[RMDB]
RNA sequence: GGGAACGACUCGAGUAGAGUCGAAAACGGGAACUGUUCUCUACCCGGAGCCUGGCGUCAGUGAGAGAACUCGCUUCUGCGUUGAGUAUCAGGGCGCAGAGGGACUUCAACUGAUACUAGGCCCGCCGGAACAGGUGCCAGCGACACGUUCCGGGGCGGUAAGUGAACUCUUCGGAGUUCACUUACCAAAAGAAACAACAACAACAAC
Reactivity to 2A3 in 0.01 (KOAc 150mM, MgCl2 10mM, bicine 150mM(pH8.5), 24C), signal-to-noise 1, nucleotides 027 to 156: c000g000g020g060a040a070c050u110g030u020u010c020u000c000u020a030c010c030c000g010g000a040g030c000c000u050g030g060c030g090u130c070a120g030u080g110a060g010a010g000a100a040c040u010c210g110c020u000u010c000u010g000c010g000u020u030g070a060g060u060a060u120c030a020g060g040g040c000g010c000a010g000a010g010g010g020a000c000u220u030c070a180a110c010u000g000a000u000a010c000u000a040g000g050c000c010c050g110c080c030g010g220a030a000c010a070g240g000u030g050c010c060a070g030c040g140a060c020a010c020g030u000u010c000c000g000g040g030g010c000
Chemical mapping of a 207-nucleotide RNA with 2A3. For 2A3 the reverse transcriptase was SuperScript II with manganese. For 2A3, 1,264 sequencing reads were counted.